[RMDB]
RNA sequence: GGGAACGACUCGAGUAGAGUCGAAAAGCCAUGAGUCGCAACGCAAAGCCGCGGCAAGUGGAGUUAGCGAGAAGAGACUAGGCUUUGGUUUCUUCAAGUGAUGCGGUCACCAAUCAGGUGUGGUAGUAGGAGCCUGCAUGGUUCGCCAUGCAGGCAAGUUAGUAGUAUGAUUCGUCAUACUACUAACAAAAGAAACAACAACAACAAC
Reactivity to DMS in 0.01 (KOAc 150mM, MgCl2 10mM, bicine 150mM(pH8.5), 24C), signal-to-noise 3, nucleotides 027 to 156: g000c010c010a080u010g010a300g040u010c020g030c000a030a070c060g030c030a190a160a270g000c000c030g050c000g020g000c000a050a300g000u000g000g030a130g020u010u000a210g030c020g000a300g010a070a060g000a060g020a040c000u000a080g010g010c150u010u000u000g000g020u000u000u000c000u000u000c010a040a300g000u000g010a090u010g030c030g010g000u000c040a060c010c020a060a130u000c020a090g000g030u000g020u000g010g010u000a070g010u000a100g020g000a120g020c000c000u010g000c000a020u000g000g020u010u020c300g030c000c000a030u010g000c030a030g000g010c000a000a020
Reactivity to 2A3 in 0.01 (KOAc 150mM, MgCl2 10mM, bicine 150mM(pH8.5), 24C), signal-to-noise 4, nucleotides 027 to 156: g040c020c010a020u050g040a000g030u030c010g010c040a060a090c030g030c110a130a190a040g040c080c040g010c040g030g020c050a050a040g020u020g030g020a060g040u080u130a040g010c050g010a060g000a060a020g010a010g010a020c020u030a050g120g120c030u120u090u090g010g000u000u000u010c000u010u020c020a040a020g010u020g040a060u100g020c050g060g050u060c010a030c060c010a030a120u150c080a080g000g030u030g010u010g030g060u080a090g030u040a070g050g160a050g010c000c000u000g000c000a020u000g010g000u030u030c040g020c080c000a000u000g000c010a010g010g000c000a000a000
Chemical mapping of a 207-nucleotide RNA with DMS and 2A3.
DMS adducts were read by reverse transcription with MarathonRT.
The RNA was probed in 150 mM KOAc, 10 mM MgCl2 and 150 mM bicine (pH 8.5) at 24 C.